[RMDB]
RNA sequence: GGGAACGACUCGAGUAGAGUCGAAAAGAUAUGGACGAAGUUCAACAGCUCACGGUCUCGGAAACGAGAUUGAGACAUGAACUAGUCCUAAGUCAAAGUCGUCAUUAGCUUCGGCUAAUGACGACAACUGCCUCUAGAUGUUCGCAUCUAGAGGCAGAAAAGAAACAACAACAACAAC
Reactivity to 2A3 in 0.01 (KOAc 150mM, MgCl2 10mM, bicine 150mM(pH8.5), 24C), signal-to-noise 1, nucleotides 027 to 126: g010a000u020a010u060g000g020a000c000g070a090a030g010u020u000c050a240a270c090a300g030c040u000c010a030c080g030g000u010c000u000c000g000g060a000a030a010c010g000a010g020a000u000u040g030a030g050a020c110a260u050g000a010a000c020u010a000g000u000c010c000u010a020a000g000u030c060a180a050a040g000u000c000g000u000c000a000u000u010a010g010c000u090u030c300g080g030c010u000a000a000u010g000a000c010g010a000c000a000a000
Reactivity to DMS in 0.01 (KOAc 150mM, MgCl2 10mM, bicine 150mM(pH8.5), 24C), signal-to-noise 2, nucleotides 027 to 126: g010a020u010a090u040g020g010a010c000g010a100a280g000u000u000c000a060a240c300a090g010c090u000c000a060c260g010g000u010c000u000c000g000g000a040a010a010c000g000a020g000a000u000u020g000a010g020a070c100a180u000g000a010a000c010u010a300g010u000c000c010u000a010a040g000u010c020a060a120a130g000u000c000g030u000c000a010u020u000a000g010c050u000u010c300g020g050c020u000a000a000u000g000a000c000g000a000c000a000a040